Structure probing data (2A3) for a 207-nucleotide construct.
RNA sequence: GGGAACGACUCGAGUAGAGUCGAAAAGGGCGUUUCGACGCCCCAACCCCGUAGGCAUGGUAGGAGCGUCAUCGACGAAGUGCCUUUCGAAAGAGAGGCACAGAGAUGACGAACUACUCCAAACAUGCCUAAACGGCACGUGCGAAUUCGUUCGCAACGCGGAGAUGAUAUUCGUAUCAUCUCCGCGAAAAGAAACAACAACAACAAC
Reactivity to 2A3 in 0.01 (KOAc 150mM, MgCl2 10mM, bicine 150mM(pH8.5), 24C), signal-to-noise 1, nucleotides 027 to 156: g010g030g050c030g000u040u130u190c280g050a000c000g000c000c000c000c000a050a210c000c000c000c000g030u030a020g060g010c000a000u000g050g030u080a000g000g000a000g020c010g020u000c000a000u000c020g300a300c030g060a170a020g020u000g000c000c000u000u000u000c000g000a000a000a000g000a000g000a000g000g010c000a000c080a000g000a000g000a000u000g000a000c000g000a010a010c000u160a080c010u010c000c020a060a160a000c000a000u030g000c000c000u000a010a000a000c020g060g000c130a000c300g080u030g040c000g000a020a030u110u010c180g010u070u000c010g000c000a000a060
It was measured as part of the RMDB library RNAMAK.